[RMDB]
RNA sequence: GGGAACGACUCGAGUAGAGUCGAAAAGAGCCCGAGCCUGAGCCAAGUUCCGAGCGAGGAGACGCGGGGGGAGGAUCAGCUCCCGAGAGGGGAUGUCACGGUAAAGAGCAUUGGAACGUCGGAGAAACUACUCCCAAGAAGCAAAGAGAGGUCUUAGCCACUUCUAGUACUUCGGUACUAGAAGUGGAAAAGAAACAACAACAACAAC
Reactivity to 2A3 in 0.01 (KOAc 150mM, MgCl2 10mM, bicine 150mM(pH8.5), 24C), signal-to-noise 1, nucleotides 027 to 156: g100a030g150c020c010c010g030a000g040c000c060u070g020a030g000c010c020a080a030g070u100u060c030c040g020a000g030c020g020a050g020g020a040g020a000c060g000c050g000g000g000g000g030g030a030g010g010a110u050c020a030g070c000u000c020c000c010g050a060g030a000g020g030g000g010a000u020g060u130c040a000c100g010g000u040a000a080a000g050a010g000c070a030u070u120g040g000a090a020c050g040u030c040g050g010a070g070a020a110a020c050u110a040c010u050c030c000c000a040a050g030a050a000g040c050a080a030a040g050a030g010a020g000g010u000c000u010u020a040g070